[RMDB]
RNA sequence: GGGAACGACUCGAGUAGAGUCGAAAAGAUGAAGGUUGGAGGAGAGGAUCAGGAAAGAGCUGUUUGUACGAACGAUCUCCUAGUGGACCUCCGGAAGAAGAAAAGGAAGAGUGAGAUAAAGAGUGAAGGUCGGACAGCAGCAGCAGAACAGAGAAAACGGUUUUAUUUACUUCGGUAAAUAAAACCGAAAAGAAACAACAACAACAAC
Reactivity to 2A3 in 0.01 (KOAc 150mM, MgCl2 10mM, bicine 150mM(pH8.5), 24C), signal-to-noise 1, nucleotides 027 to 156: g000a010u070g010a050a010g040g000u110u070g010g070a020g020g000a030g010a010g050g000a020u060c020a020g090g000a070a100a010g050a020g000c030u030g020u040u270u120g020u160a030c050g000a110a000c000g010a020u020c000u000c010c020u030a050g070u070g060g040a020c030c000u000c040c040g100g010a000a050g020a060a010g030a040a120a010a000g040g000a040a010g020a020g040u140g040a050g020a080u090a040a070a010g030a000g020u010g090a040a020g010g010u030c040g000g010a020c010a010g040c060a000g000c000a000g060c020a000g020a060a030c010a020g050a120g020a050a300a020a010